Structure probing data (2A3) for a 207-nucleotide construct. Reactivities are given for positions 27 through 156. It was measured as part of the RMDB library M2RFOK.
[RMDB]
RNA sequence: GGGAACGACUCGAGUAGAGUCGAAAAGCUCUGGAAUUGAGGCCCCUCUAACAAUAAUCCAAGACUACUUCGCAGAGUAAUCUGCCGAAUCGUAGGAUGCCCAUUACUAUCUAUUUUUGGAGCAUCUAAAACUGUCAGUGCUUCGGCACUGACAGAAGUCUGGUGUACUGUUCGCAGUACACCAGACAAAAGAAACAACAACAACAAC
Reactivity to 2A3 in 0.01 (KOAc 150mM, MgCl2 10mM, bicine 150mM(pH8.5), 24C), signal-to-noise 1, nucleotides 027 to 156: g000c000u020c050u040g000g150a190a120u120u080g000a060g030g010c050c000c030c000u030c110u080a050a070c070a030a080u140a010a010u040c020c050a040a070g110a090c010u030a020c000u010u010c000g000c000a000g000a020g060u140a100a210u000c010u000g010c040c040g020a010a010u160c010g000u020a050g050g040a000u000g000c000c000c000a000u030u020a050c080u060a030u300c060u140a230u120u080u000u020u010g020g000a150g000c000a000u010c010u090a070a070a030a050c000u000g000u010c000a000g000u000g000c000u020u010c000g070g000c000a020c000u000g000a000c000a030g000a000a000